[RMDB]
RNA sequence: GGGAACGACUCGAGUAGAGUCGAAAAACAGCUAUGAACGUAUUGAAAUGGCAUUACAUGAUACAGAAAUUGUACGUACAAUGGCAACAGGUAUCGCUGGUUUAUCAGUAGCAGCUGACUCAUUAUCGCAAUCUGCAGGGUUCGCCCUGCAGAUUGCAAAAGAAACAACAACAACAAC
Reactivity to 2A3 in 0.01 (KOAc 150mM, MgCl2 10mM, bicine 150mM(pH8.5), 24C), signal-to-noise 1, nucleotides 027 to 126: a010c010a000g030c090u000a050u240g010a010a000c030g130u150a040u100u180g000a060a060a060u000g110g050c020a000u080u120a050c020a010u170g150a040u150a130c000a000g130a080a130a060u110u000g000u000a000c000g030u020a020c000a060a030u100g060g000c020a000a000c000a100g000g090u010a040u080c110g000c000u000g000g000u000u080u000a000u010c000a000g080u090a000g000c000a000g080c000u060g060a000c000u000c000a050u060u060a090u300c020